[RMDB]
RNA sequence: GGGAACGACUCGAGUAGAGUCGAAAAGAUUGCUAUGUUGCCCGGCAGAGGCUUUGUAUCUGGGCACUAGUCUCAACAGAUGACGACACUUCUGUUCAAUCUCAUAUCCUAUCCAUACUGGAUGUAAUCUAGAAUUAUGCUUCGGCAUAAUUCUAGAAAAAGAAACAACAACAACAAC
Reactivity to DMS in 0.01 (KOAc 150mM, MgCl2 10mM, bicine 150mM(pH8.5), 24C), signal-to-noise 3, nucleotides 027 to 126: g000a020u000u000g020c030u010a010u020g020u020u010g020c020c000c000g010g020c190a060g020a070g010g020c150u010u010u000g000u000a070u000c030u000g040g000g010c010a010c020u000a000g000u010c150u000c250a030a040c020a010g010a010u000g010a120c110g020a190c250a160c040u000u000c020u000g000u000u010c080a020a020u000c020u010c110a180u000a110u010c010c000u000a050u000c010c000a140u010a150c250u010g020g010a030u000g010u010a060a170
Reactivity to 2A3 in 0.01 (KOAc 150mM, MgCl2 10mM, bicine 150mM(pH8.5), 24C), signal-to-noise 3, nucleotides 027 to 126: g000a020u030u040g000c010u010a010u250g050u120u130g110c010c030c000g000g000c040a050g040a080g280g070c100u270u170u190g050u080a120u060c020u050g000g000g000c000a000c010u010a000g000u030c030u030c110a010a030c000a000g020a020u060g130a090c190g090a020c040a000c100u000u000c000u000g010u040u050c000a000a000u030c020u010c030a050u070a040u120c000c010u020a020u000c020c020a050u090a300c100u140g040g000a000u000g100u090a090a070